Source information:
Structure probing data (DMS and 2A3) for a 207-nucleotide construct. For 2A3 the reverse transcriptase was SuperScript II with manganese. It was measured as part of the RMDB library ARCHII. DMS adducts were read by reverse transcription with MarathonRT. The RNA was probed in 150 mM KOAc, 10 mM MgCl2 and 150 mM bicine (pH 8.5) at 24 C. Reactivities are given for positions 27 through 156. For DMS, 1,641 sequencing reads were counted.
RNA sequence: GGGAACGACUCGAGUAGAGUCGAAAAUGAGAGUCAUUGGCUGCUAUAGAGGCUUCUAGCUAAGGGAGUCCAAUGUAAACAAUUCUAGAAGAUAAGCAUGUAGAGGUUAGCAGGGAGUUUGUCAAGGACGAGAGUUCGAGUCUCUCCACCUCCAUUAUCAUGUAUGUGCCUUCGGGCACAUACAUGAAAAAGAAACAACAACAACAAC
Reactivity to DMS in 0.01 (KOAc 150mM, MgCl2 10mM, bicine 150mM(pH8.5), 24C), signal-to-noise 1, nucleotides 027 to 156: u000g010a050g010a130g000u000c040a050u010u000g030g030c010u000g010c050u010a210u020a090g040a230g010g000c010u000u000c040u000a120g050c100u000a170a190g010g010g000a070g060u020c030c010a050a060u030g000u000a070a070a200c050a070a210u000u000c000u000a090g000a130a270g030a030u000a010a000g020c030a010u000g030u000a070g010a050g000g010u010u000a040g040c020a070g010g000g010a060g030u010u000u010g030u010c050a100a060g010g030a140c110g000a100g000a090g050u010u000c020g010a220g030u000c010u000c010u000c030c010a090c040c000u000c000c010a080u000u000a150
Reactivity to 2A3 in 0.01 (KOAc 150mM, MgCl2 10mM, bicine 150mM(pH8.5), 24C), signal-to-noise 2, nucleotides 027 to 156: u200g000a010g010a010g130u060c030a020u040u050g020g000c020u040g020c020u120a080u110a200g210a110g080g000c000u060u110c070u120a050g010c040u070a050a140g000g010g020a000g040u050c020c020a030a020u080g010u180a090a100a000c030a150a050u000u040c020u060a010g010a050a000g030a070u020a020a000g000c000a020u050g040u140a010g000a000g050g010u040u030a000g010c010a000g000g030g000a020g010u010u130u050g050u040c040a020a020g030g000a000c100g030a000g000a000g060u010u120c010g000a000g030u000c010u000c000u000c010c000a050c030c020u070c050c020a040u080u080a040